[RMDB]
RNA sequence: GGGAACGACUCGAGUAGAGUCGAAAAACCAGCCGACGCUUGAGCUUCGGUUGAUCCUCGUCUCCUCGUUAAUCUACCUGUUCGGCGAAUCCGUAUUCGAUGCCGUCGAGAUUAUCCGGGGGUCGGGGCAAGAACAGGAGCACGAACACGAACAGAAGCUAGUAAUGCUUUUCGAAGCAUUACUAGCAAAAGAAACAACAACAACAAC
Reactivity to 2A3 in 0.01 (KOAc 150mM, MgCl2 10mM, bicine 150mM(pH8.5), 24C), signal-to-noise 2, nucleotides 027 to 156: a010c040c000a030g050c030c060g010a120c050g050c080u110u270g060a090g030c010u020u010c000g020g000u000u010g010a050u040c000c030u000c000g000u000c080u020c020c000u020c010g010u030u040a000a000u000c040u060a300c120c120u150g080u170u050c000g000g000c020g080a090a050u050c070c080g030u100a160u030u250c060g050a090u110g030c040c000g000u020c030g010a000g000a000u010u000a050u050c080c020g000g000g000g000g000u000c000g020g000g000g000c030a030a030g060a090a000c040a070g050g000a020g050c030a020c080g030a060a020c070a020c150g070a100a000c050a080g180a230a010